An RNA of 177 nucleotides, treated with DMS and 2A3 and read out base by base. Reactivities are rounded to 0.1 and cut off at 0 and 3. DMS adducts were read by reverse transcription with MarathonRT. The RNA was probed in 150 mM KOAc, 10 mM MgCl2 and 150 mM bicine (pH 8.5) at 24 C.

[RMDB]
RNA sequence: GGGAACGACUCGAGUAGAGUCGAAAAGUGGUCGGAGCAGCCUUCGUAUUCGUCGUGACGAUGCUUUUCAUCUGACGAAGAACGAUCACCGCAGACAACCGAACUCCUGAAAGCAAACAAAACAGCCUAUAGGCAUACAUUUCGAUGUAUGCCUAUAAAAAGAAACAACAACAACAAC
Reactivity to DMS in 0.01 (KOAc 150mM, MgCl2 10mM, bicine 150mM(pH8.5), 24C), signal-to-noise 9, nucleotides 027 to 126: g010u020g010g010u000c010g010g010a180g020c030a050g020c090c150u000u010c030g010u000a150u000u000c010g010u010c010g010u010g020a050c100g010a040u010g000c300u020u030u020u010c020a070u000c020u010g010a010c010g010a020a040g010a110a050c010g000a030u000c130a060c090c110g020c040a090g000a100c080a070a070c020c010g010a100a100c080u010c020c020u000g010a070a060a090g010c110a080a060a080c130a080a050a070a070c120a080g000c110c100
Reactivity to 2A3 in 0.01 (KOAc 150mM, MgCl2 10mM, bicine 150mM(pH8.5), 24C), signal-to-noise 9, nucleotides 027 to 126: g100u070g020g010u040c030g030g020a090g020c040a020g020c030c000u030u030c020g010u030a050u000u010c010g010u010c060g060u080g050a060c080g030a040u090g070c140u170u140u120u180c010a020u020c030u060g000a010c010g010a010a020g020a060a020c000g000a010u030c030a020c040c020g000c000a050g020a120c030a020a020c000c020g030a060a040c020u010c030c000u030g050a060a030a010g050c080a030a030a110c030a030a130a060a040c040a030g050c010c010